Overview: The record gives the reactivity of an RNA of 177 nucleotides to DMS and 2A3. Values cover nucleotides 27 to 126. The RNA was probed in 150 mM KOAc, 10 mM MgCl2 and 150 mM bicine (pH 8.5) at 24 C.
[RMDB]
RNA sequence: GGGAACGACUCGAGUAGAGUCGAAAAUAAUCAAGAUGAAUCGUUUUUAGUUUGCUUGCUUACCUUAUGGGCCAGCAUGAGAUCAACUUGAAUCUUUUUAUGUAGGCAGAUAGCGACGGAAUUUAAAGAUAGGCACUGAGUUCGCUCAGUGCCUAUCAAAAGAAACAACAACAACAAC
Reactivity to DMS in 0.01 (KOAc 150mM, MgCl2 10mM, bicine 150mM(pH8.5), 24C), signal-to-noise 1, nucleotides 027 to 126: u090a020a040u000c020a020a050g020a070u000g020a050a010u000c140g000u000u010u000u000u000a130g020u000u000u000g000c010u000u000g000c010u000u000a070c060c260u000u020a080u020g000g000g000c020c000a050g000c040a000u030g010a000g000a060u000c060a060a060c140u060u000g090a020a000u000c060u020u000u020u040u000a130u000g000u020a040g000g000c050a070g040a000u030a000g000c020g010a110c150g000g140a070a220u010u000u000a110a090a150
Reactivity to 2A3 in 0.01 (KOAc 150mM, MgCl2 10mM, bicine 150mM(pH8.5), 24C), signal-to-noise 2, nucleotides 027 to 126: u230a000a010u160c020a020a000g030a090u050g020a010a300u090c170g050u020u050u050u040u160a180g100u010u070u000g000c020u000u010g000c000u030u110a180c040c000u210u060a080u270g050g000g070c000c000a000g000c030a020u070g000a020g000a060u020c020a000a180c050u010u010g020a030a050u000c000u000u070u050u060u000a100u240g020u070a090g000g000c010a010g020a130u100a150g030c000g120a000c010g080g000a040a030u140u150u040a190a050a000
DMS adducts were read by reverse transcription with MarathonRT.